[RMDB]
RNA sequence: GGGAACGACUCGAGUAGAGUCGAAAACUCUAGCCUGGGCAACAAGAGUGAAACUCUGUCUCAAAAUCACGCACAAAAAAUAAAAUAAACUCACUGUGGAAGGUCUAUUAAGUACAGAGAAGUGAAAAGAAGAAAAUCCAGUUAUAACCUAGAGAUCCUAUAUGGAAUGGUUCGCCAUUCCAUAUAGAAAAGAAACAACAACAACAAC
Reactivity to 2A3 in 0.01 (KOAc 150mM, MgCl2 10mM, bicine 150mM(pH8.5), 24C), signal-to-noise 3, nucleotides 027 to 156: c010u010c010u000a020g030c000c010u000g010g010g000c010a130a060c010a120a080g000a000g010u010g030a010a000a010c030u050c060u070g110u050c070u030c180a110a130a040a050u070c030a050c090g080c070a020c100a050a110a030a020a000a020u150a060a070a020a030u110a060a070a000c030u070c120a050c110u050g000u010g010g000a010a000g000g000u020c010u010a010u050u000a000a000g010u000a000c010a000g020a000g000a020a000g000u020g040a010a030a010a050g070a010a010g020a020a090a010a010u040c040c010a020g010u040u090a160u100a210a080c030c070u050a040g010a000g020a070u090c030
Reactivity to DMS in 0.01 (KOAc 150mM, MgCl2 10mM, bicine 150mM(pH8.5), 24C), signal-to-noise 2, nucleotides 027 to 156: c050u010c010u010a040g030c010c000u000g020g020g000c030a070a140c060a060a140g000a040g020u000g000a170a040a100c070u010c110u000g020u000c040u000c020a060a080a120a110u010c040a100c180g040c080a050c040a000a010a090a080a030a100u000a020a070a030a100u000a030a040a050c020u020c080a090c130u010g030u010g010g020a040a060g010g010u030c010u000a040u000u000a010a040g010u010a030c000a070g000a050g010a030a050g040u000g000a020a000a060a300g000a060a060g020a120a080a080a090u000c020c030a040g000u000u000a080u010a070a130c070c010u000a080g020a150g010a100u000c020
The record gives the reactivity of an RNA of 207 nucleotides to 2A3 and DMS.
For 2A3, 1,882 sequencing reads were counted.
The data come from the RNA Mapping Database (RMDB), library OK3TST.
Values cover nucleotides 27 to 156.
For 2A3 the reverse transcriptase was SuperScript II with manganese.
The RNA was probed in 150 mM KOAc, 10 mM MgCl2 and 150 mM bicine (pH 8.5) at 24 C.